[RMDB]
RNA sequence: GGGAACGACUCGAGUAGAGUCGAAAAUCGACCUCCCUUGGCACGAGGACGUGCCUAAUUUUGAGUGGGGGAGGAUGUCACGGACAAAUUCCGUGACCGUUUUAGGCCAGCAUUGAAGAGCGUGCCUAGCUGCGUUUCAACCUGCGUGGGUUGGGGCCCACGUUCGUAGCUUCGGCUACGAACGUGGAAAAGAAACAACAACAACAAC
Reactivity to 2A3 in 0.01 (KOAc 150mM, MgCl2 10mM, bicine 150mM(pH8.5), 24C), signal-to-noise 2, nucleotides 027 to 156: u180c020g000a040c000c020u010c000c000c000u030u080g020g000c000a000c010g060a150g160g190a090c060g030u000g000c000c000u040a090a120u040u280u220u190g160a080g060u130g000g000g000g080g020a000g000g000a000u050g000u010c010a000c020g000g000a060c160a130a110a080u140u000c000c000g030u000g000a000c010c000g040u030u050u160u140a000g000g050c060c050a020g000c080a100u020u130g190a120a020g020a020g020c020g000u060g000c000c000u020a050g000c090u060g040c070g000u000u060u000c000a010a010c000c000u100g060c110g080u300g000g060g000u030u000g000g010g010g000c000